[RMDB]
RNA sequence: GGGAACGACUCGAGUAGAGUCGAAAACGUAACCGACAAGAGCUUUCGUGCGGUGUCUGCGGAUAAAACAAAAGCCACCGUGUCGGUCAGUGGUAUGACCAUCACCGUGAACGGCGUUGCUGCAGGCUACCUAAGGGAGGUUCGCCUCCCUUAGGUAAAAAGAAACAACAACAACAAC
Reactivity to 2A3 in 0.01 (KOAc 150mM, MgCl2 10mM, bicine 150mM(pH8.5), 24C), signal-to-noise 4, nucleotides 027 to 126: c030g060u050a040a040c020c010g050a070c070a080a090g050a030g200c050u080u230u160c060g070u150g060c020g060g020u030g000u000c000u020g010c010g000g040a090u130a110a220a010a000c040a020a120a030a000g010c000c010a010c000c020g040u030g010u070c170g010g000u010c010a030g040u070g110g060u230a160u100g020a020c010c000a010u050c020a010c020c000g030u020g040a040a030c020g020g010c020g020u030u040g000c000u020g000c010a020g020g020c010
Reactivity to DMS in 0.01 (KOAc 150mM, MgCl2 10mM, bicine 150mM(pH8.5), 24C), signal-to-noise 5, nucleotides 027 to 126: c090g010u000a110a100c020c010g010a060c090a110a080g020a150g000c120u000u010u000c070g010u010g000c030g020g000u010g020u010c010u010g010c050g010g010a080u010a070a090a050a060c040a040a150a120a200g000c050c010a040c020c130g020u000g010u000c120g000g010u000c040a040g020u000g010g030u010a110u000g010a030c020c010a120u000c030a030c020c130g010u010g010a060a070c050g000g010c210g010u000u000g000c010u000g000c020a010g010g000c030